[RMDB]
RNA sequence: GGGAACGACUCGAGUAGAGUCGAAAACUCUUUUACUCGGCAUGAUACCACCGUUAUCGGGUCAACAGAGUAGUUGCAAAUGACAACACUGCUCAGGGUUAUGCUCUCGCUGCCUAAUGGCGGUGCGCGGACGACUCAAUGUUCGCAUUGAGUCGAACCCACGCUGUUACUUCGGUAACAGCGUGGGAAAAGAAACAACAACAACAAC
Reactivity to 2A3 in 0.01 (KOAc 150mM, MgCl2 10mM, bicine 150mM(pH8.5), 24C), signal-to-noise 1, nucleotides 027 to 156: c050u080c020u000u130u110u130a080c040u020c020g010g000c050a050u190g030a020u160a140c040c040a040c030c020g180u170u150a020u000c010g050g000g010u020c000a000a000c020a000g020a000g050u040a020g020u020u120g050c040a050a200a270u150g000a100c020a080a020c050a120c030u020g020c000u010c020a000g000g000g000u060u050a080u300g050c060u050c080u090c040g020c020u000g000c000c000u120a270a150u160g000g000c020g020g060u060g000c070g010c140g050g040a020c070g000a000c010u000c000a000a000u000g040u030u010c210g020c040a000u000u000g000a020g000u000c000g000a000a000
Chemical mapping of a 207-nucleotide RNA with 2A3. Conditions: 150 mM KOAc, 10 mM MgCl2 and 150 mM bicine (pH 8.5), 24 C. It was measured as part of the RMDB library M2RFPK.